[RMDB]
RNA sequence: GGGAACGACUCGAGUAGAGUCGAAAAGGCUCACGGUGCGGCAGUGUGGAGACCUGUUGUAAAGCGCGGCGCCCAUCGCGGUACCGCGUGAGAACGCAUCCGCGGAGGCGGAGCGGUCAGAGCCGGGAUCCUAGGGUUUCUUCGGAAACCCUAGGAUAAAAGAAACAACAACAACAAC
Reactivity to 2A3 in 0.01 (KOAc 150mM, MgCl2 10mM, bicine 150mM(pH8.5), 24C), signal-to-noise 2, nucleotides 027 to 126: g000g010c000u020c040a090c050g070g070u070g000c010g000g000c000a040g020u040g020u090g240g060a040g040a110c000c000u000g010u050u020g040u050a060a050a010g010c000g030c020g000g030c000g000c000c020c000a220u140c160g050c150g000g000u030a040c000c000g000c000g020u060g050a040g000a010a000c010g000c010a300u020c000c000g010c040g030g070a120g060g120c010g000g000a010g000c000g000g010u020c020a010g010a000g000c000c000g000g000g020
Reactivity to DMS in 0.01 (KOAc 150mM, MgCl2 10mM, bicine 150mM(pH8.5), 24C), signal-to-noise 2, nucleotides 027 to 126: g000g000c010u000c010a250c150g000g000u000g000c020g020g000c020a040g050u040g030u010g000g030a140g010a060c080c000u000g040u000u000g000u090a090a110a280g010c020g020c010g000g020c100g020c000c000c000a100u010c300g000c130g000g030u010a090c000c010g000c000g010u010g010a010g000a050a050c050g000c020a070u010c010c010g000c000g000g070a150g000g040c000g000g000a070g000c000g020g010u000c090a080g010a120g020c000c010g020g000g000
Record summary: Chemical mapping of a 177-nucleotide RNA with 2A3 and DMS. Conditions: 150 mM KOAc, 10 mM MgCl2 and 150 mM bicine (pH 8.5), 24 C. DMS adducts were read by reverse transcription with MarathonRT.